[RMDB]
Notes:
This 177-nucleotide RNA was probed chemically with 2A3 and DMS. The RNA was probed in 150 mM KOAc, 10 mM MgCl2 and 150 mM bicine (pH 8.5) at 24 C. The DMS profile rests on 3,590 reads. For 2A3, 5,495 sequencing reads were counted.
RNA sequence: GGGAACGACUCGAGUAGAGUCGAAAAGAUAUGGAUCCUCAUAAGGCGAAGAACAACUUCGGAAACGAAGUUGGGAGCCUGUGAGGGAUCCUAAGUCAAAGUAUCUGGUACUUCGGUACCAGAUACACACAUAUCGGAGGUUCGCCUCCGAUAUGUGAAAAGAAACAACAACAACAAC
Reactivity to 2A3 in 0.01 (KOAc 150mM, MgCl2 10mM, bicine 150mM(pH8.5), 24C), signal-to-noise 2, nucleotides 027 to 126: g010a000u020a030u060g000g010a010u050c010c000u030c020a030u120a240a230g020g000c030g300a300a010g000a050a000c000a000a000c010u000u000c000g000g010a000a010a020c010g000a000a000g000u000u010g000g000g010a000g000c010c050u020g010u030g030a170g050g060g000a020u000c000c000u000a020a000g020u020c060a190a050a110g000u000a000u000c010u010g000g000u010a010c020u040u130c300g110g000u000a000c000c000a000g000a000u000a000c000a000
Reactivity to DMS in 0.01 (KOAc 150mM, MgCl2 10mM, bicine 150mM(pH8.5), 24C), signal-to-noise 3, nucleotides 027 to 126: g000a050u000a180u010g000g000a080u010c000c000u000c010a020u010a070a070g030g030c010g000a080a160g010a150a300c030a010a000c010u000u000c010g010g000a030a040a060c010g000a020a020g000u010u000g000g010g000a060g040c000c010u020g040u000g000a040g000g030g000a010u000c000c000u010a000a090g000u000c000a110a150a180g020u000a010u000c000u000g000g010u000a010c000u000u020c250g040g020u000a010c000c000a010g000a000u000a000c000a140